[RMDB]
RNA sequence: GGGAACGACUCGAGUAGAGUCGAAAACGUUGACACGAUCCGCCCAUCACCAAUAGAUCGCCAUGCGCCAACGGCAGUCGCAACGAUGGACCGCGGCCACGCGGCCGCAGCGCGAAGACGCGGGUGGCUUCAAUGACUACUUCGGUAGUCAUUGAAGAAAAGAAACAACAACAACAAC
Reactivity to DMS in 0.01 (KOAc 150mM, MgCl2 10mM, bicine 150mM(pH8.5), 24C), signal-to-noise 4, nucleotides 027 to 126: c060g000u000u010g010a110c130a100c060g010a060u000c030c060g000c040c020c030a110u000c060a060c040c040a090a090u000a080g010a040u000c060g010c020c070a090u000g010c080g010c020c000a030a110c090g000g000c040a140g010u020c040g010c070a120a140c090g010a050u000g020g000a130c060c030g000c010g000g010c060c180a050c170g020c100g030g010c020c010g000c070a030g020c090g000c010g000a060a090g000a060c060g010c100g000g000g040u000g010g000
Reactivity to 2A3 in 0.01 (KOAc 150mM, MgCl2 10mM, bicine 150mM(pH8.5), 24C), signal-to-noise 2, nucleotides 027 to 126: c030g060u050u140g070a030c040a010c160g040a060u020c040c030g000c030c020c000a040u110c020a020c050c000a090a070u050a140g070a060u080c040g020c040c040a070u100g030c000g020c040c020a060a060c020g060g000c030a020g040u030c000g000c050a120a120c080g070a040u080g010g040a060c010c010g000c010g000g030c030c010a110c040g080c090g010g000c010c030g000c010a010g000c020g000c010g030a060a040g040a010c020g000c020g040g000g030u050g000g000